The record gives the reactivity of an RNA of 177 nucleotides to DMS and 2A3.
RNA sequence: GGGAACGACUCGAGUAGAGUCGAAAACUUUGAACGUUCGCGUUCAAAGAAACCUCUAAGCAGAAUGGCGAGGACGACGCUGCGGAGCGCGUUUGCCAAUAAAAAGCGUAGGCUUCGGCCUACGCAACAUAUAAGCUGUCUUCGGACAGCUUAUAUGAAAAGAAACAACAACAACAAC
Reactivity to DMS in 0.01 (KOAc 150mM, MgCl2 10mM, bicine 150mM(pH8.5), 24C), signal-to-noise 6, nucleotides 027 to 126: c000u000u000u000g000a000a010c000g030u000u010c220g020c010g030u000u000c000a000a000a010g010a060a100a140c040c000u000c130u010a100a150g030c130a100g000a120a100u000g000g010c030g010a120g010g010a180c020g000a080c010g020c010u000g000c270g010g000a040g020c030g010c010g010u000u000u000g010c020c010a040a080u020a040a070a090a100a100g010c010g010u000a000g010g010c010u000u010c190g030g000c000c000u000a000c000g000c000a010a030
Reactivity to 2A3 in 0.01 (KOAc 150mM, MgCl2 10mM, bicine 150mM(pH8.5), 24C), signal-to-noise 6, nucleotides 027 to 126: c000u010u000u010g000a000a000c000g010u060u050c210g020c000g090u000u000c010a000a000a000g000a070a010a010c030c010u030c060u130a140a100g080c070a060g080a300a190u100g060g010c030g030a070g070g040a050c020g020a070c020g000c010u120g070c080g150g120a030g000c090g000c000g000u000u020u090g060c000c020a040a040u120a050a090a020a030a000g000c000g000u000a000g010g010c010u020u040c200g080g000c000c000u000a000c000g000c000a010a000

For 2A3, 9,465 sequencing reads were counted. The RNA was probed in 150 mM KOAc, 10 mM MgCl2 and 150 mM bicine (pH 8.5) at 24 C. The data come from the RNA Mapping Database (RMDB), library M2PK50. The DMS profile rests on 7,200 reads.